Background
An RNA of 207 nucleotides, treated with 2A3 and read out base by base. Values cover nucleotides 27 to 156. The reactions ran in a buffer of 150 mM KOAc, 10 mM MgCl2 and 150 mM bicine (pH 8.5), at 24 C.
RNA sequence: GGGAACGACUCGAGUAGAGUCGAAAACUGCAUCAGAUGAGACCGUGUUUGAUGCACGCGGUAUGCUCCUUUUUCCAGGAGCAAUUGAUGUUCAUGUACACUUUCGUGAACCCGGUGGAGAACAUAAAGAAACGUGGAAGACGGGAUCUCAAAGCGCCCUCAUAAGGCCUUUCGAGGCCUUAUGAGGAAAAGAAACAACAACAACAAC
Reactivity to 2A3 in 0.01 (KOAc 150mM, MgCl2 10mM, bicine 150mM(pH8.5), 24C), signal-to-noise 3, nucleotides 027 to 156: c030u040g010c010a020u030c030a020g170a220u110g080a050g090a090c010c010g060u040g050u100u110u080g100a150u110g010c000a000c050g040c040g000g040u090a070u090g000c020u010c010c010u010u070u050u130u060c050c030a000g000g000a000g000c040a010a040u030u060g090a070u040g010u040u050c060a070u120g060u100a030c030a040c070u130u210u160c090g000u020g060a120a060c040c000c000g020g010u070g020g060a100g020a060a050c030a060u180a110a130a010g120a050a060a020c050g030u030g090g030a080a000g020a020c030g010g010g010a030u020c020u000c010a050a120a000g040c030g080c100
It was measured as part of the RMDB library OK3TST.